[RMDB]
Source: RMDB library VIROID, as collected in RNAgym. Structure probing data (DMS and 2A3) for a 177-nucleotide construct. For DMS, 1,536 sequencing reads were counted.

RNA sequence: GGGAACGACUCGAGUAGAGUCGAAAAGGCGGCUUAGCGAUUAAGGCGUUGUUUCACCCUAGUGGCCCUUACCCCAUGCAAAGUCUGCAUGCAGGCAGGGUAUUGUGCCGCGGGGCACAACUGGUCGGAGUUAACAACAGUUCGCUGUUGUUAACUCAAAAGAAACAACAACAACAAC
Reactivity to DMS in 0.01 (KOAc 150mM, MgCl2 10mM, bicine 150mM(pH8.5), 24C), signal-to-noise 2, nucleotides 027 to 126: g000g030c050g000g000c030u000u010a070g000c150g000a070u000u000a040a060g000g030c050g040u000u000g010u000u020u000c110a120c010c020c020u000a070g080u010g010g000c000c000c020u010u000a050c020c010c060c040a070u010g010c100a030a100a150g010u000c130u000g020c050a050u000g000c190a050g000g030c270a120g000g000g010u000a030u000u000g020u000g020c020c010g060c080g000g000g020g000c090a030c070a040a020c120u010g020g020u000c070g050
Reactivity to 2A3 in 0.01 (KOAc 150mM, MgCl2 10mM, bicine 150mM(pH8.5), 24C), signal-to-noise 1, nucleotides 027 to 126: g010g010c030g000g000c040u070u090a020g080c040g140a090u060u170a130a030g070g020c070g020u030u010g000u050u030u020c010a040c000c040c000u050a170g030u020g030g030c000c000c000u000u010a000c000c020c000c020a030u050g000c010a000a120a220g130u080c050u030g050c050a040u060g020c030a030g220g090c020a010g020g000g020u010a010u000u010g140u170g000c000c030g000c020g000g030g000g020c030a050c000a120a090c040u080g030g040u110c040g050